[RMDB]
RNA sequence: GGGAACGACUCGAGUAGAGUCGAAAACUUCUGGCGUAAUGACCCUUUCGGCGGCACAUCCAGUGUAUUGCUGCCCGUUACGUGAACGAGAACCCAUUUUGCGUCUGGCGAAGUCGGCACUGGUGACGCACUAUUAUAUAUUCGUAUAUAAUAGUGCAAAAGAAACAACAACAACAAC
Reactivity to DMS in 0.01 (KOAc 150mM, MgCl2 10mM, bicine 150mM(pH8.5), 24C), signal-to-noise 8, nucleotides 027 to 126: c070u010u010c030u010g020g010c020g010u010a040a030u010g000a120c060c070c070u000u010u030c090g010g020c020g000g010c010a060c300a110u030c050c070a050g000u020g030u010a120u030u010g000c010u000g000c020c000c050g010u000u020a020c040g020u000g000a100a100c140g000a060g000a120a130c020c010c000a140u010u000u020u020g000c050g010u010c040u010g000g010c090g000a080a070g010u010c060g010g020c030a020c010u000g000g010u010g010a130c160
Reactivity to 2A3 in 0.01 (KOAc 150mM, MgCl2 10mM, bicine 150mM(pH8.5), 24C), signal-to-noise 9, nucleotides 027 to 126: c040u090u060c040u110g090g000c010g010u030a050a050u080g110a190c030c030c000u050u190u110c030g010g010c000g020g010c010a030c010a050u060c050c030a080g020u030g020u120a100u050u140g010c010u010g010c000c020c010g010u020u010a010c020g010u020g090a080a030c060g010a020g050a090a080c010c000c020a050u090u070u070u080g050c030g030u050c040u070g060g000c050g040a070a030g070u070c030g030g010c010a010c040u040g020g050u050g030a020c080